[RMDB]
RNA sequence: GGGAACGACUCGAGUAGAGUCGAAAAGUUGAGAGCGUUUAACUUAAGUCUUGUUUAUUAGCUUAAAAAAACUAUAUACAAGUGGUGGUAGUCCGCCACUCUAAGGGGACGCCUUUAGAAGAAGAGGGAAAGGCACUAAGCUUCGGCUUAGUGCCAAGUCAGUACGUUACUUCGGUAACGUACUGACAAAAGAAACAACAACAACAAC
Reactivity to 2A3 in 0.01 (KOAc 150mM, MgCl2 10mM, bicine 150mM(pH8.5), 24C), signal-to-noise 1, nucleotides 027 to 156: g080u100u150g080a120g010a030g050c020g010u070u050u080a140a030c030u100u090a130a030g050u090c020u070u020g030u010u100u040a130u070u100a000g010c000u070u050a180a000a040a040a000a040a090c090u110a090u020a000u020a100c010a030a010g010u000g090g000u020g000g030u040a030g050u030c010c060g000c010c000a000c000u020c000u000a020a000g030g000g050g020a000c020g050c000c030u110u130u100a030g000a200a010g010a020a010g060a070g030g110g010a100a140a060g020g010c000a010c000u000a000a000g000c000u020u160c230g040g000c010u000u030a000g000u000g000c000c000a000a000